[RMDB]
RNA sequence: GGGAACGACUCGAGUAGAGUCGAAAAGUACGUCGACCUGAUGGCUGCGGGCAUCAACGAUCCAGUGAAGGUUACCCGCUCUGCUCUGCAGAACGCUGCCUCCAUUGCAGCGCUGUUCCUGACCACACACCCUAAUGGUCUUCGGACCAUUAGGGUGAAAAGAAACAACAACAACAAC
Reactivity to DMS in 0.01 (KOAc 150mM, MgCl2 10mM, bicine 150mM(pH8.5), 24C), signal-to-noise 3, nucleotides 027 to 126: g020u010a040c150g010u000c030g000a090c070c030u000g010a060u000g010g010c030u000g000c090g020g010g020c070a050u000c050a030a090c090g020a070u020c070c050a040g010u000g020a090a080g020g010u000u010a090c150c070c040g030c040u000c010u010g010c000u030c040u000g020c060a030g010a070a040c010g030c040u010g000c000c110u000c080c150a040u000u000g000c050a040g000c020g010c050u000g010u000u000c000c000u000g000a070c120c080a130c240a140
Reactivity to 2A3 in 0.01 (KOAc 150mM, MgCl2 10mM, bicine 150mM(pH8.5), 24C), signal-to-noise 3, nucleotides 027 to 126: g050u050a030c050g040u020c030g060a110c000c050u050g040a070u040g130g080c020u020g030c080g060g010g030c010a050u020c010a040a060c010g030a010u020c030c040a030g060u020g180a150a030g070g000u060u060a060c000c000c000g020c000u000c010u010g000c000u010c040u180g000c030a000g000a110a030c020g000c010u010g000c020c020u120c100c030a090u060u200g010c010a000g010c000g010c010u000g020u000u000c000c000u060g090a080c030c000a060c000a000